This 177-nucleotide RNA was probed chemically with 2A3 and DMS.
RNA sequence: GGGAACGACUCGAGUAGAGUCGAAAAAGGGCGCUGGUUUCAAAACUCUGGCAGAAGGCCAGCAAGUUGAAUUCACCAUUGAAAAUGGUGCGAAAGGCCCAGCAGCUGCUAACGUAACUGCAAUCUAAAUCAUUUGGACGUUCGCGUCCAAAUGAUUAAAAGAAACAACAACAACAAC
Reactivity to 2A3 in 0.01 (KOAc 150mM, MgCl2 10mM, bicine 150mM(pH8.5), 24C), signal-to-noise 1, nucleotides 027 to 126: a030g090g000g030c130g020c070u000g050g090u000u000u130c030a110a110a000a000c060u040c000u020g000g000c060a000g130a300a000g300g060c000c010a000g000c060a010a020g010u000u000g070a060a000u040u000c000a000c000c010a000u100u040g220a080a100a000a000u000g000g000u030g130c000g100a030a080a060g000g030c000c000c000a000g000c030a000g000c000u110g000c010u160a140a000c130g080u040a040a060c000u040g000c060a040a040u000c060u030a030
Reactivity to DMS in 0.01 (KOAc 150mM, MgCl2 10mM, bicine 150mM(pH8.5), 24C), signal-to-noise 2, nucleotides 027 to 126: a060g020g000g000c000g000c020u000g010g000u000u000u030c010a040a020a030a050c080u010c060u000g000g000c000a240g010a170a190g010g060c000c010a010g000c250a040a040g020u000u000g000a050a070u030u010c010a020c010c000a050u000u040g060a080a070a130a040u000g000g000u040g020c170g000a040a140a040g000g020c030c010c000a100g030c040a000g030c040u000g030c010u030a080a090c150g010u000a050a120c010u030g010c010a200a090u010c020u040a060
For DMS, 2,064 sequencing reads were counted. It was measured as part of the RMDB library RFM100. Conditions: 150 mM KOAc, 10 mM MgCl2 and 150 mM bicine (pH 8.5), 24 C.